The data come from the RNA Mapping Database (RMDB), library RNAMAK. Structure probing data (2A3) for a 207-nucleotide construct. The reactions ran in a buffer of 150 mM KOAc, 10 mM MgCl2 and 150 mM bicine (pH 8.5), at 24 C. Reactivities are given for positions 27 through 156.
[RMDB]
RNA sequence: GGGAACGACUCGAGUAGAGUCGAAAAGCGUACUACUUUCUUCGGGUGGAGCUCGUCGUGCUUCUAUCCCAAAUAGGAUAGAAUCACUAGAGCGAUGAAAUCUCUAGCGUGAGAAAGUAUCGCAAAACCCGUUAGUCGCUUCGGCGACUAACGGGAACCUGAACAGGCAGUUCGCUGCCUGUUCAGGAAAAGAAACAACAACAACAAC
Reactivity to 2A3 in 0.01 (KOAc 150mM, MgCl2 10mM, bicine 150mM(pH8.5), 24C), signal-to-noise 1, nucleotides 027 to 156: g000c000g010u030a130c010u000a010c000u050u000u010c030u000u000c000g140g000g100u130g030g030a020g000c010u020c010g130u040c040g040u010g030c010u000u000c000u020a000u020c000c000c080a150a260a140u250a080g000g000a000u000a020g020a010a000u000c000a010c010u020a040g030a040g030c000g000a000u020g010a020a300a130u010c030u030c030u070a120g070c140g150u130g070a020g000a000a000a000g000u000a020u300c020g000c030a010a010a010a010c010c000c000g020u000u010a000g020u060c000g000c060u020u050c300g070g000c060g090a000c000u000a000a000c000g000g000g020a000a020